Chemical mapping of a 207-nucleotide RNA with DMS and 2A3. Conditions: 150 mM KOAc, 10 mM MgCl2 and 150 mM bicine (pH 8.5), 24 C. Values cover nucleotides 27 to 156. The DMS profile rests on 2,267 reads. The 2A3 profile rests on 3,084 reads. It was measured as part of the RMDB library RNAMAK.
RNA sequence: GGGAACGACUCGAGUAGAGUCGAAAACGAAGAGUUGGUUCGCCAACUCUUCGAAAAAGAUAUGGAGAGUCCCUAAUGACUAUGAAGUCGGAAACGAUGGAGUCGAUAGGGAGCUCUCCUAAGUCAAAAAAGGUAACGACCUUCGGGUCGUUACCAACGAUGACUUUAGAUUCGUCUAAAGUCAUCGAAAAGAAACAACAACAACAAC
Reactivity to DMS in 0.01 (KOAc 150mM, MgCl2 10mM, bicine 150mM(pH8.5), 24C), signal-to-noise 2, nucleotides 027 to 156: c020g000a030a000g000a020g020u020u000g020g010u000u020c300g060c030c020a040a030c040u000c020u000u010c000g010a000a040a140a130a180g000a120u000a250u020g000g000a010g050a080g030u000c000c000c000u010a090a210u000g010a020c010u000a240u020g010a200a270g000u020c010g060g030a210a160a200c040g000a070u000g020g010a030g000u000c000g000a200u010a100g010g000g000a030g050c010u000c000u000c010c010u010a000a120g000u000c060a000a060a190a130a120a130g010g020u000a000a050c000g040a020c000c000u010u020c300g080g080g020u000c010g000u000u000a000c020c000a000a010
Reactivity to 2A3 in 0.01 (KOAc 150mM, MgCl2 10mM, bicine 150mM(pH8.5), 24C), signal-to-noise 3, nucleotides 027 to 156: c010g000a010a010g000a010g000u010u010g030g020u050u130c260g040c040c000a000a000c000u010c000u010u000c000g000a000a000a000a010a000g030a020u060a030u060g010g000a010g000a000g000u020c000c000c000u020a060a100u130g010a010c010u030a170u300g050a050a020g020u000c000g030g010a100a060a080c010g020a000u040g000g020a010g010u000c020g060a070u040a030g000g000g010a020g020c010u000c010u000c000c000u000a000a000g000u010c010a000a050a060a080a040a050g010g000u020a000a000c000g020a000c000c000u050u120c210g060g000g000u000c000g000u000u000a000c020c000a000a000